[RMDB]
RNA sequence: GGGAACGACUCGAGUAGAGUCGAAAAGAAGCAGCACAGGGCGUGUCGAGCACCAGUACGCUCGUAAAUCCACUGGAAAACUAUAAACGCCAACGACGAGCGUUUCGCUCUAGCCGCUUAAGGCUGGGCCACUGCACUAAUUUGUCUUUGGGUUAGGCUUAUAUAGACACUUCGGUGUCUAUAUAAGAAAAGAAACAACAACAACAAC
Reactivity to DMS in 0.01 (KOAc 150mM, MgCl2 10mM, bicine 150mM(pH8.5), 24C), signal-to-noise 3, nucleotides 027 to 156: g010a080a120g010c030a040g000c040a080c070a120g010g030g020c060g030u010g030u000c060g010a040g010c010a100c060c050a190g010u000a110c070g020c000u000c020g020u010a030a060a090u000c030c020a070c020u010g010g000a100a090a070a110c080u010a140u000a030a090a090c040g020c030c000a040a060c030g010a040c040g000a060g000c030g010u000u000u000c060g030c010u000c010u000a050g030c010c010g020c250u000u000a070a120g010g010c000u030g010g000g010c010c060a100c040u010g000c030a070c060u000a060a110u010u000u010g030u000c040u000u000u000g000g000g000u000u000a060g010g010
Reactivity to 2A3 in 0.01 (KOAc 150mM, MgCl2 10mM, bicine 150mM(pH8.5), 24C), signal-to-noise 6, nucleotides 027 to 156: g060a030a010g030c090a010g020c010a020c030a060g120g090g020c060g030u040g030u060c010g000a000g000c010a010c010c000a000g020u020a020c010g010c000u000c000g020u050a010a010a010u020c020c010a010c020u000g010g000a060a040a020a010c040u050a050u110a220a090a010c050g050c040c010a030a030c050g070a010c030g020a020g030c020g010u030u050u100c040g000c000u020c020u100a010g000c010c010g090c120u190u180a100a020g000g000c000u000g000g000g010c000c010a050c060u080g010c020a020c080u120a120a150u120u070u180g020u020c010u030u030u030g020g000g000u040u040a040g050g000